[RMDB]
RNA sequence: GGGAACGACUCGAGUAGAGUCGAAAAGUGUGACCAUCUUUUGUUUUGGCUGCCGUUGCGUGCUGGCCCCGUGCCGCCUGCCCGUGCAUUCUCUGCGACGGCCGCGCGCUGAUGUACAUCUCCUACAAGGACCUUUUAAUUUCGAUUAAAAGGUCCUAAAAGAAACAACAACAACAAC
Reactivity to DMS in 0.01 (KOAc 150mM, MgCl2 10mM, bicine 150mM(pH8.5), 24C), signal-to-noise 2, nucleotides 027 to 126: g010u000g020u010g010a180c090c020a080u000c050u000u000u000u010g020u000u000u000u020g010g010c020u010g010c040c030g000u010u000g000c060g020u000g000c050u000g020g000c030c030c080c080g010u010g020c020c060g020c050c070u000g010c030c040c060g050u000g010c040a090u010u000c080u010c090u010g020c020g000a050c080g000g010c020c060g000c090g010c070g020c030u000g000a030u000g010u000a060c060a060u000c040u000c040c020u010a100c240a150
Reactivity to 2A3 in 0.01 (KOAc 150mM, MgCl2 10mM, bicine 150mM(pH8.5), 24C), signal-to-noise 2, nucleotides 027 to 126: g050u050g030u020g070a040c000c030a050u020c040u050u170u160u170g130u070u170u050u150g090g000c030u030g010c010c010g010u030u020g060c010g040u050g030c030u080g000g030c020c000c010c040g100u110g050c000c020g010c000c000u030g000c000c000c020g010u020g030c010a060u160u040c060u050c030u070g020c040g030a010c000g030g010c030c030g050c000g000c010g010c020u020g010a080u010g020u010a020c000a050u040c070u050c050c000u040a060c010a040